[RMDB]
RNA sequence: GGGAACGACUCGAGUAGAGUCGAAAAAAGGCUUCAGUAGCAGGACCCACGCAAAGAUUAUUUUUAACGCCAUCUUGCAUGUCUUUGUUACCGCCUUUACCAAUGCCAGCGAUUUUGCCAUCUUUAACACAGUCUAAGUCUUCGGACUUAGACUGUGAAAAGAAACAACAACAACAAC
Reactivity to 2A3 in 0.01 (KOAc 150mM, MgCl2 10mM, bicine 150mM(pH8.5), 24C), signal-to-noise 5, nucleotides 027 to 126: a000a000g100g000c050u150u140c110a050g020u020a000g000c000a000g010g000a010c020c020c040a060c160g000c040a070a070a040g000a030u060u010a130u080u210u120u120u180a140a050c070g060c060c030a020u020c020u020u010g000c010a020u050g020u000c030u100u300u060g000u010u010a010c000c020g020c000c000u010u000u020a010c000c010a010a030u120g020c030c020a020g040c090g090a120u040u090u040u160g040c040c020a060u010c030u000u050u060a120a020
Reactivity to DMS in 0.01 (KOAc 150mM, MgCl2 10mM, bicine 150mM(pH8.5), 24C), signal-to-noise 3, nucleotides 027 to 126: a020a030g000g010c030u010u010c260a080g010u000a030g000c030a040g010g000a020c020c130c140a100c170g020c100a020a070a020g000a020u000u010a040u010u020u060u070u040a030a210c300g010c160c190a030u000c000u000u000g000c000a080u000g010u000c010u000u000u020g010u000u000a020c000c140g030c000c000u000u000u010a270c000c000a040a060u020g000c050c020a050g000c050g000a060u000u000u000u010g020c020c110a070u020c030u010u010u020a030a060
Record summary:
Chemical mapping of a 177-nucleotide RNA with 2A3 and DMS. Source: RMDB libraries RFM100 and RFMREP, as collected in RNAgym. Reactivities are rounded to 0.1 and cut off at 0 and 3.